[RMDB]
RNA sequence: GGGAACGACUCGAGUAGAGUCGAAAAUUUUGAUACGCAAGAAGUAAUCCUGGUGCACCAUCAUAAUUUCUCGCCUCAAGCAUCCUGAUUAUCUCACCUCUUUUCAAAUUACUAUUGCCAAGUACGCCACAAUAUGCCUUUAUUGCGUCUGCAUGACAUUCAGGACGCUUUUCGAAGCGUCCUGAAUAAAAGAAACAACAACAACAAC
Reactivity to 2A3 in 0.01 (KOAc 150mM, MgCl2 10mM, bicine 150mM(pH8.5), 24C), signal-to-noise 1, nucleotides 027 to 156: u050u060u000u040g020a010u070a190c070g010c000a030a100g050a090a020g010u070a030a060u030c030c090u110g030g020u000g000c010a030c100c000a000u060c020a010u010a220a090u130u090u030c060u000c010g000c000c010u050c000a070a060g050c010a070u050c000c020u000g010a060u000u230a080u060c080u000c110a070c040c060u140c000u000u200u020u090c080a100a130a070u070u010a100c030u030a020u080u050g000c000c050a060a030g010u000a040c020g050c010c000a090c000a070a000u070a140u160g160c000c000u050u090u090a100u180u000g050c030g020u000c020u050g110c110a070u140g010a000c000